[RMDB]
RNA sequence: GGGAACGACUCGAGUAGAGUCGAAAAUCACAGUGAGUUUUUUGUAAGUGUAACAGCUUCCAUUCUGCAGUGUGUUUUGAGUCUGACUCUUAGAUCCAUCACUUCCUCACAGUGUUAUCUUGGGCAAGCAUCCUAACAUUUCUGAGUUUCAGAAACACCCUGAUGGAUACUUCGGUAUCCAUCAGGGAAAAGAAACAACAACAACAAC
Reactivity to 2A3 in 0.01 (KOAc 150mM, MgCl2 10mM, bicine 150mM(pH8.5), 24C), signal-to-noise 2, nucleotides 027 to 156: u080c000a020c030a050g060u010g070a060g030u000u070u010u030u250u170g070u110a080a050g000u010g010u060a100a010c000a020g010c000u030u030c050c000a060u060u040c020u080g090c030a050g040u010g000u000g000u130u040u040u070g060a000g020u030c030u000g040a100c010u030c000u050u040a050g000a110u050c070c030a060u030c010a000c040u050u020c020c020u040c010a030c080a080g020u030g030u160u050a070u030c040u070u020g000g010g010c050a050a050g020c010a060u020c000c020u080a100a050c030a060u050u050u000c030u010g040a070g110u020u090u000c030a050g050a040a060a010c040a060
Chemical mapping of a 207-nucleotide RNA with 2A3. The reactions ran in a buffer of 150 mM KOAc, 10 mM MgCl2 and 150 mM bicine (pH 8.5), at 24 C. The data come from the RNA Mapping Database (RMDB), library OK3TST.